[RMDB]
RNA sequence: GGGAACGACUCGAGUAGAGUCGAAAAACAAGCUGCACGUGCGUGCGAGCAGUUUUCGAAAUCGCACGUUUCACGUAAAGACGCAACUCUACUCGAGAAAGCGAGUCACCCAGACAGCGUCAAGGAAUAACUACUAGGAUUUCGAUCCUAGUAGUUAAAAAGAAACAACAACAACAAC
Reactivity to 2A3 in 0.01 (KOAc 150mM, MgCl2 10mM, bicine 150mM(pH8.5), 24C), signal-to-noise 5, nucleotides 027 to 126: a010c080a060a030g060c030u050g010c050a000c010g030u030g010c020g000u010g000c010g010a050g090c100a060g030u070u050u150u250c060g060a040a050a070u010c000g000c000a000c010g000u050u110u100c030a010c000g020u030a050a020a060g040a010c040g000c050a000a020c000u000c000u010a010c000u000c000g000a010g000a000a000a010g050c020g010a020g020u010c010a080c040c010c010a020g050a060c040a010g040c020g040u030c060a050a070g070g030a130a100
Reactivity to DMS in 0.01 (KOAc 150mM, MgCl2 10mM, bicine 150mM(pH8.5), 24C), signal-to-noise 6, nucleotides 027 to 126: a070c160a090a110g000c030u000g000c300a020c010g020u000g010c030g020u000g010c000g010a020g000c140a160g010u000u000u000u000c120g000a050a080a080u000c010g010c020a030c020g000u000u000u000c030a030c030g010u010a040a130a070g000a190c060g010c060a140a030c000u000c000u000a010c000u000c010g000a030g000a030a050a080g000c060g000a050g010u000c020a070c000c010c010a170g010a080c130a070g010c030g000u000c040a090a100g000g000a100a110
An RNA of 177 nucleotides, treated with 2A3 and DMS and read out base by base. In probing experiments dimethyl sulfate is read out at A N1 and C N3, which are open when not base-paired. Conditions: 150 mM KOAc, 10 mM MgCl2 and 150 mM bicine (pH 8.5), 24 C. Source: RMDB library M2PK90, as collected in RNAgym.